[RMDB]
RNA sequence: GGGAACGACUCGAGUAGAGUCGAAAAUCAGGAGGAGACGUCGUGCACUUGGCACUUAUGGCUACAUUCAAGAUUCAACCAGUCUUUCUGGUGGCUUCCUUUUUGAAGGCAAGGUGGACCAACCAAGAGCACCUCGAUAAUUCGUUAUCGAGGUGCUAAAAGAAACAACAACAACAAC
Reactivity to DMS in 0.01 (KOAc 150mM, MgCl2 10mM, bicine 150mM(pH8.5), 24C), signal-to-noise 3, nucleotides 027 to 126: u020c050a100g020g000a060g010g010a050g020a030c070g020u000c150g010u010g000c100a090c100u000u020g000g020c030a050c050u010u000a080u000g000g020c020u000a110c060a040u000u000c120a010a060g000a050u000u000c040a070a070c050c030a040g020u000c230u000u010u010c040u010g000g030u000g000g000c070u000u000c030c030u010u000u010u000u010g020a060a070g000g000c080a040a070g010g020u020g000g010a140c040c020a040a120c060c090a070a100g000
Reactivity to 2A3 in 0.01 (KOAc 150mM, MgCl2 10mM, bicine 150mM(pH8.5), 24C), signal-to-noise 1, nucleotides 027 to 126: u050c000a000g070g000a020g010g040a040g010a030c030g090u030c040g040u060g040c000a000c030u090u090g110g000c020a000c020u090u090a100u140g050g030c000u030a000c030a070u060u110c040a100a010g000a030u060u010c010a010a000c000c000a000g070u050c110u010u150u040c020u020g010g000u000g000g000c000u050u000c000c000u000u100u050u030u120g090a050a010g020g000c030a020a010g050g000u010g020g030a060c000c050a030a030c010c000a050a020g030